[RMDB]
Source information:
Conditions: 150 mM KOAc, 10 mM MgCl2 and 150 mM bicine (pH 8.5), 24 C. The record gives the reactivity of an RNA of 207 nucleotides to 2A3 and DMS. For 2A3 the reverse transcriptase was SuperScript II with manganese. DMS adducts were read by reverse transcription with MarathonRT.
RNA sequence: GGGAACGACUCGAGUAGAGUCGAAAACGCAUGCGAAAGCAUGCGGCUAUGCUAAUGCAUGGCGAGGGGUUACAUGGUGACUUUCCCCCGUAUGUGGUUAUUAUUCCGCAUACGAUUACCAGUGUCUGUUAUUAUUCAGAUACAUGGACGUCACCGAGGGUAUCGGAUAUUUCGAUAUCCGAUACCCAAAAGAAACAACAACAACAAC
Reactivity to 2A3 in 0.01 (KOAc 150mM, MgCl2 10mM, bicine 150mM(pH8.5), 24C), signal-to-noise 2, nucleotides 027 to 156: c010g000c010a000u010g040c030g050a110a000a010g010c000a000u000g000c000g020g000c000u000a000u020g020c020u180a300a080u300g010c010a000u010g010g000c030g090a100g020g000g000g030u050u100a080c070a140u220g000g000u000g000a000c000u040u060u040c020c000c000c000c000g000u000a000u000g010u010g000g130u020u060a100u170u060a090u300u000c000c000g030c000a010u000a000c020g000a050u060u160a050c000c000a000g000u000g000u000c000u000g080u070u050a260u160u120a120u140u100c000a000g000a000u000a000c040a140u040g000g050a040c040g000u000c000a000c000c000g000a080
Reactivity to DMS in 0.01 (KOAc 150mM, MgCl2 10mM, bicine 150mM(pH8.5), 24C), signal-to-noise 1, nucleotides 027 to 156: c020g010c000a000u030g000c000g020a160a080a300g010c000a000u010g030c040g020g010c020u000a010u000g020c000u010a190a110u010g020c020a020u000g020g010c050g020a210g000g030g020g000u010u000a100c110a170u070g010g000u000g000a010c000u000u000u000c000c020c030c030c000g050u010a000u000g020u000g030g020u000u000a130u000u010a300u000u010c000c000g040c000a040u000a020c010g000a110u010u000a130c030c000a100g020u000g000u020c000u000g010u020u000a220u000u000a260u000u000c000a020g040a000u000a030c030a120u000g020g000a200c190g000u000c000a000c000c090g000a130